[RMDB]
RNA sequence: GGGAACGACUCGAGUAGAGUCGAAAACAGGAGGUGGCCGGGAUCAGUGAGUGGUAAGGAUGUAUGGAUUGUUUUGGUUGGCGCAGUGGGCAUCUCCGAUGAAAUACCACUUUUUUUUUCAUUUACGUAUCAGUGCAUAGUUCGCUAUGCACUGAUAAAAAGAAACAACAACAACAAC
Reactivity to 2A3 in 0.01 (KOAc 150mM, MgCl2 10mM, bicine 150mM(pH8.5), 24C), signal-to-noise 2, nucleotides 027 to 126: c000a000g010g030a000g070g020u080g080g000c020c050g000g180g050a090u090c000a050g070u010g210a140g000u050g050g100u020a060a110g090g170a020u110g050u120a060u080g080g110a060u000u070g060u030u040u110u050g120g000u020u080g000g000c040g000c020a030g000u100g000g000g000c030a020u000c020u000c010c040g030a040u100g000a000a070a040u110a060c060c000a020c040u040u010u000u000u000u000u000u000u140c120a190u000u000u250a050c080g070
Reactivity to DMS in 0.01 (KOAc 150mM, MgCl2 10mM, bicine 150mM(pH8.5), 24C), signal-to-noise 4, nucleotides 027 to 126: c090a270g000g010a080g000g010u010g030g030c000c050g010g010g020a100u030c080a110g010u020g020a070g030u010g000g020u020a050a120g010g020a100u030g010u040a080u010g000g020a110u000u000g010u010u000u010u000g020g030u010u000g010g010c120g000c090a030g010u020g020g010g010c050a040u000c060u000c020c050g010a020u010g000a050a060a070u030a100c060c040a070c080u020u040u000u000u030u020u000u000u000c060a070u010u010u020a100c230g020